[RMDB]
RNA sequence: GGGAACGACUCGAGUAGAGUCGAAAAGACUGCGUGCACUUGAGACGAUAUCGAGCCGGAAAUUAAUCGAUAAUGUCUCUCGUAGUGGAUACGAUCCGGCAAGUAUCGACUACUUGUGCUCGUAGGACCGGGAGCACGGAUUCGUCCGUGCUCCCGGAAAAGAAACAACAACAACAAC
Reactivity to 2A3 in 0.01 (KOAc 150mM, MgCl2 10mM, bicine 150mM(pH8.5), 24C), signal-to-noise 2, nucleotides 027 to 126: g020a000c000u000g000c000g020u020g000c000a000c000u000u010g020a000g000a000c020g020a010u000a000u090c010g010a000g000c000c000g000g080a100a070a000u280u250a100a080u130c030g000a000u040a230a130u170g040u020c010u000c020u050c030g020u030a000g020u120g140g000a000u000a000c040g000a000u040c000c020g000g020c040a060a000g030u000a000u000c000g040a000c000u100a080c000u040u030g000u000g000c000u000c020g020u010a000g000g000a000